[RMDB]
Source: RMDB library OK2TRN, as collected in RNAgym. Chemical mapping of a 177-nucleotide RNA with DMS. The reactions ran in a buffer of 150 mM KOAc, 10 mM MgCl2 and 150 mM bicine (pH 8.5), at 24 C.
RNA sequence: GGGAACGACUCGAGUAGAGUCGAAAAAUGGAGAAUGGACAAUGAUGAGGAGGACCAUUCGUUAGUGCCUGUGUUGGAAGAAUGAAAAGGUUUCAGGUUUAGUAGUGUCUACCUAAUGGCAUCAUAAUGGAGGAUACAUGUUCGCAUGUAUCCUCCAAAAAGAAACAACAACAACAAC
Reactivity to DMS in 0.01 (KOAc 150mM, MgCl2 10mM, bicine 150mM(pH8.5), 24C), signal-to-noise 2, nucleotides 027 to 126: a100u000g040g010a140g000a060a030u000g000g030a150c100a060a070u010g020a120u010g010a160g020g000a120g000g010a150c060c010a020u000u000c000g000u000u020a060g020u000g030c010c010u000g010u010g020u000u000g000g000a060a060g000a090a060u000g010a000a040a090a120g000g010u000u000u000c080a040g010g010u010u000u000a090g030u010a040g000u010g020u000c040u000a050c040c050u000a020a070u000g020g020c030a020u000c060a050u010a060a140

For DMS the reverse transcriptase was MarathonRT.